[RMDB]
RNA sequence: GGGAACGACUCGAGUAGAGUCGAAAAUCAGGUACACAACGCGCUUAAGCAAAUUAAGCAAUCCCUAAUUUGAAUUUGUAGAACAUUCCCAGUCUCAAUUCAAAUAUCAUUUUAACAUUGUCUAUAACAAAUGGUUCAAGUUCGCUUGAACCAUUUGAAAAGAAACAACAACAACAAC
Reactivity to DMS in 0.01 (KOAc 150mM, MgCl2 10mM, bicine 150mM(pH8.5), 24C), signal-to-noise 4, nucleotides 027 to 126: u020c100a070g000g010u010a040c070a050c080a090a080c140g040c170g010c010u000u000a030a060g030c150a050a070a130u010u010a030a030g030c020a130a120u000c020c010c010u010a110a080u000u010u010g000a010a000u010u010u020g010u030a010g000a030a020c050a090u010u010c000c000c000a180g010u000c000u000c000a020a000u010u000c010a000a010a010u010a060u030c120a050u040u000u020u030a060a150c130a120u010u000g000u020c050u000a080u010a050a210
Reactivity to 2A3 in 0.01 (KOAc 150mM, MgCl2 10mM, bicine 150mM(pH8.5), 24C), signal-to-noise 6, nucleotides 027 to 126: u070c020a020g030g110u120a040c060a010c020a070a150c040g030c020g000c040u020u020a030a000g000c100a150a030a300u080u050a050a000g000c000a010a100u030c000c010c000u040a030a080u020u000u020g010a010a000u080u050u130g090u290a020g020a050a000c010a070u030u010c000c010c000a010g020u000c000u000c000a010a010u000u000c000a000a030a000u140a060u050c170a160u050u110u140u150a130a090c090a110u070u060g030u020c050u080a100u020a150a040